This 177-nucleotide RNA was probed chemically with 2A3 and DMS. The DMS profile rests on 2,333 reads.
RNA sequence: GGGAACGACUCGAGUAGAGUCGAAAAUUGGCGCGUGAGAUCUCACGCCAGACGUUUCUGCGGGGUGCCGCCGGAGCGUUGGCCGCCGGCGCGGUCUUCGGCUCGGUCCGGGCUACCGCGGAUCCGGUCCAGACUCUUUUUUCGAAAAGAGUCUGGAAAAAGAAACAACAACAACAAC
Reactivity to 2A3 in 0.01 (KOAc 150mM, MgCl2 10mM, bicine 150mM(pH8.5), 24C), signal-to-noise 4, nucleotides 027 to 126: u080u080g100g000c050g000c070g030u090g010a150g070a300u120c080u030c140a010c010g000c010c000a020g020a040c030g000u020u000u000c010u010g000c000g000g000g000g050u080g150c010c020g020c000c010g090g030a020g000c000g000u000u010g010g010c010c000g000c030c060g160g050c220g000c000g040g010u000c000u020u020c040g210g050c000u020c020g000g030u030c040c010g050g000g020c030u300a300c000c000g000c000g000g000a000u010c000c020g060g010
Reactivity to DMS in 0.01 (KOAc 150mM, MgCl2 10mM, bicine 150mM(pH8.5), 24C), signal-to-noise 1, nucleotides 027 to 126: u010u020g000g030c070g040c010g020u000g000a030g000a170u070c150u000c000a020c020g070c020c030a070g000a090c030g010u000u010u000c000u000g020c000g010g030g000g020u010g010c000c000g010c000c000g000g000a000g000c010g000u000u000g000g000c000c000g020c010c100g040g020c260g030c000g000g000u000c030u000u020c000g010g010c010u000c020g000g010u000c300c100g000g000g000c030u020a030c000c000g000c000g000g000a010u010c000c000g030g000